[RMDB]
RNA sequence: GGGAACGACUCGAGUAGAGUCGAAAACAUCCAGUGUUCGCACUGGAUGAGAGGAAUGUGGAUCGGCAAACUACAUACCAAAAGCUCAGCUCGAAAGAGCAACGAUUUCGUCGUUCGCGACGAAAAAAUCGAUUCAGAUGUUCGCAUCUGAAUCGAUAAAAGAAACAACAACAACAAC
Reactivity to 2A3 in 0.01 (KOAc 150mM, MgCl2 10mM, bicine 150mM(pH8.5), 24C), signal-to-noise 1, nucleotides 027 to 126: c000a000u000c010c000a010g000u010g040u070u080c180g040c100a000c000u020g000g000a000u000g000a010g020a000g000g040a070a040u030g000u030g020g030a100u070c120g180g020c110a020a060a030c010u040a000c010a040u060a070c000c000a000a020a000a120g030c020u030c060a010g000c000u000c000g040a050a040a030g020a010g000c000a010a050c020g040a050u050u000u000c020g000u000c010g010u020u040c250g000c010g060a000c000g000a000a010a000a000a000
Reactivity to DMS in 0.01 (KOAc 150mM, MgCl2 10mM, bicine 150mM(pH8.5), 24C), signal-to-noise 2, nucleotides 027 to 126: c010a010u000c000c000a010g000u000g020u000u010c210g040c000a000c000u010g000g000a030u010g010a130g010a180g000g000a110a010u000g010u010g000g000a060u020c050g000g030c220a120a170a070c010u000a030c040a010u010a090c040c030a040a090a070a090g010c020u000c080a110g010c000u000c000g000a030a100a080g000a020g000c010a060a090c180g000a080u000u000u000c010g020u000c000g000u000u020c210g020c000g010a000c020g000a000a020a010a060a120